The record gives the reactivity of an RNA of 177 nucleotides to DMS and 2A3. The reactions ran in a buffer of 150 mM KOAc, 10 mM MgCl2 and 150 mM bicine (pH 8.5), at 24 C.
[RMDB]
RNA sequence: GGGAACGACUCGAGUAGAGUCGAAAAGAUAUGGACACGCGUGUGAACGAAGAACCUCACAUUUUCAAACGUCGGAAACGACGUUUGAAAAUGUGAGGGGAGUUCCACGAACUACGUGUCCUAAGUCGAAGUCUUAAGACUUCGGUCUUAAGACUUCAAAAGAAACAACAACAACAAC
Reactivity to DMS in 0.01 (KOAc 150mM, MgCl2 10mM, bicine 150mM(pH8.5), 24C), signal-to-noise 2, nucleotides 027 to 126: g000a110u010a300u010g010g000a020c000a020c010g000c020g030u000g000u020g020a010a020c000g000a170a200g030a210a190c020c010u000c000a000c000a000u010u010u000u000c000a000a030a000c000g030u000c000g010g020a070a080a220c010g000a000c010g010u000u000u000g000a010a000a020a010u000g020u000g000a030g030g000g000g000a050g010u000u000c000c000a010c020g030a090a120c190u000a290c000g000u010g020u000c000c000u000a030a050g010u020c120
Reactivity to 2A3 in 0.01 (KOAc 150mM, MgCl2 10mM, bicine 150mM(pH8.5), 24C), signal-to-noise 2, nucleotides 027 to 126: g040a050u170a080u260g000g000a000c000a000c000g090c030g030u070g170u290g060a020a000c020g190a300a130g040a060a000c000c000u010c000a000c000a010u020u040u000u020c000a020a030a010c000g030u010c010g050g070a130a060a030c030g030a000c020g030u030u000u030g000a000a000a020a040u000g000u000g000a000g000g000g030g000a010g000u020u000c010c000a000c000g020a020a030c050u190a050c040g000u000g010u000c000c000u020a100a010g110u090c110